Structure probing data (DMS) for a 177-nucleotide construct. Reactivities are given for positions 27 through 126. The DMS profile rests on 964 reads.

[RMDB]
RNA sequence: GGGAACGACUCGAGUAGAGUCGAAAACGUUUCCACCUGAGGGAGUGGCUCUUCAACGACCUCUCGUGGGUGCGGACCAUAGGGAGUUACCUCGUAGGCCUUUCCGGCCGCCUGGUGGAAUUGGUGAGAGAGGGCUUUAUUUCGAUAAAGCCCUCUCAAAAGAAACAACAACAACAAC
Reactivity to DMS in 0.01 (KOAc 150mM, MgCl2 10mM, bicine 150mM(pH8.5), 24C), signal-to-noise 2, nucleotides 027 to 126: c030g000u010u000u000c000c000a020c030c010u000g010a240g010g010g000a270g010u020g010g010c100u000c040u000u000c090a210a100c020g020a110c040c000u000c020u020c250g030u020g020g000g000u020g020c040g000g010a280c130c200a110u000a100g020g010g010a040g010u000u000a040c000c030u020c030g010u000a140g030g010c000c000u000u010u040c230c200g040g010c040c010g000c120c110u000g000g060u010g010g010a030a030u010u000g000g000u030g010a230